[RMDB]
RNA sequence: GGGAACGACUCGAGUAGAGUCGAAAAGCUCCUUCAGGUGAACGAUCUCGGUGGUUUCUCUGAAGGCAUGAUCACCCCGUCCGAUGCGGAAGUUCGUGCUUCCGUCGAACGCGAAAGUCGGACGGCGAAAACGAGUUACCGUUCGCGGUAACUCGAACAAUCCAACCUCGUUCGCGAGGUUGGAUUGAAAAGAAACAACAACAACAAC
Reactivity to DMS in 0.01 (KOAc 150mM, MgCl2 10mM, bicine 150mM(pH8.5), 24C), signal-to-noise 1, nucleotides 027 to 156: g000c050u000c000c000u000u000c000a090g020g000u000g000a060a030c050g020a070u000c040u020c210g100g000u010g070g040u010u000u020c020u000c070u000g010a020a020g000g000c150a050u000g030a110u000c000a100c000c060c000c000g000u000c000c010g000a040u000g020c010g000g020a020a050g000u000u040c240g000u000g000c020u000u000c010c020g060u010c000g020a090a110c170g030c080g030a160a110a120g040u000c020g010g010a020c020g000g030c080g000a050a050a130a200c020g010a080g000u000u000a010c020c000g050u010u000c300g010c030g030g010u000a000a020c000u010c000g020a010a050
Reactivity to 2A3 in 0.01 (KOAc 150mM, MgCl2 10mM, bicine 150mM(pH8.5), 24C), signal-to-noise 4, nucleotides 027 to 156: g020c030u010c010c020u010u010c000a050g100g010u120g100a010a020c050g120a200u050c090u120c280g270g040u150g030g040u040u080u010c000u000c000u020g000a000a000g020g000c030a100u100g030a020u080c070a200c010c020c000c000g000u000c000c000g010a000u030g000c000g010g040a000a000g000u130u300c220g070u300g100c000u000u000c000c000g000u000c000g050a150a060c100g020c050g120a090a040a000g030u000c000g000g000a000c000g000g000c030g040a060a070a000a050c010g010a000g000u000u000a000c000c000g010u040u090c290g000c000g060g000u000a000a000c000u000c000g000a000a010